[RMDB]
This 177-nucleotide RNA was probed chemically with DMS and 2A3.
RNA sequence: GGGAACGACUCGAGUAGAGUCGAAAAUACGUCAAACCUGGAGGUACCAGUAGCGGAGAUGCCACCACUGCAUAUGCCAAUAGUGUCUUUAACAUUUUGCAGGCGACAACUGCUAAUGUCAGUGCACCAUAUAGUUGAGCUUCGGCUCAACUAUAUGAAAAGAAACAACAACAACAAC
Reactivity to DMS in 0.01 (KOAc 150mM, MgCl2 10mM, bicine 150mM(pH8.5), 24C), signal-to-noise 5, nucleotides 027 to 126: u010a080c100g020u000c060a040a110a110c110c020u000g010g010a140g000g000u000a070c070c020a050g010u000a080g010c050g010g000a090g000a080u000g010c030c020a070c040c040a070c050u000g000c040a040u010a090u000g010c030c040a070a100u010a070g010u000g000u000c060u000u000u000a100a040c020a020u010u000u000u000g000c010a010g000g000c080g010a090c200a040a090c010u000g000c010u000a020a030u000g010u000c080a050g010u000g000c050a050c120
Reactivity to 2A3 in 0.01 (KOAc 150mM, MgCl2 10mM, bicine 150mM(pH8.5), 24C), signal-to-noise 5, nucleotides 027 to 126: u070a010c030g030u010c040a060a080a100c020c010u030g040g020a030g050g040u060a050c030c010a030g020u050a010g030c010g030g030a060g010a040u060g060c020c000a020c000c000a030c020u020g000c020a040u060a040u170g040c020c020a050a040u050a060g010u020g020u030c020u020u110u050a040a020c010a030u060u070u070u110g000c000a000g000g040c050g100a030c030a090a040c010u010g020c010u020a020a010u030g030u030c020a030g040u010g100c010a020c010